RNA sequence: GGGAACGACUCGAGUAGAGUCGAAAAGCUGAAAAUGAUUUAUGGGUAGUGGAAUAGGUUAACCGUAAGACCUUUGGUUGAAAAACAAUGAAAUUAAGCCUCAGAUAUUUUAUCUUUGGUUACGGGAAAAAUCAUUUACCGUUCGCGGUAAAUGAAACCAAUUAUACACCUUCGGGUGUAUAAUUGGAAAAGAAACAACAACAACAAC
Reactivity to 2A3 in 0.01 (KOAc 150mM, MgCl2 10mM, bicine 150mM(pH8.5), 24C), signal-to-noise 2, nucleotides 027 to 156: g040c030u060g040a070a020a060a090u160g040a080u110u180u240a190u240g000g030g000u030a060g030u060g020g060a070a150u060a090g040g000u010u010a030a030c010c000g000u020a020a030g080a050c010c000u050u040u030g100g010u020u100g030a130a050a020a020a050c030a030a070u120g070a090a020a110u130u060a140a030g020c010c000u000c010a020g030a040u000a120u050u290u160u160a030u080c000u000u050u040g010g000u030u010a030c020g000g030g000a000a010a000a000a170u000c010a000u000u000u000a010c000c020g000u010u050c260g000c010g080g000u000a000a000a000u000g010a020a000a000
An RNA of 207 nucleotides, treated with 2A3 and read out base by base. Source: RMDB library M2RFPK, as collected in RNAgym. For 2A3 the reverse transcriptase was SuperScript II with manganese. The reactions ran in a buffer of 150 mM KOAc, 10 mM MgCl2 and 150 mM bicine (pH 8.5), at 24 C.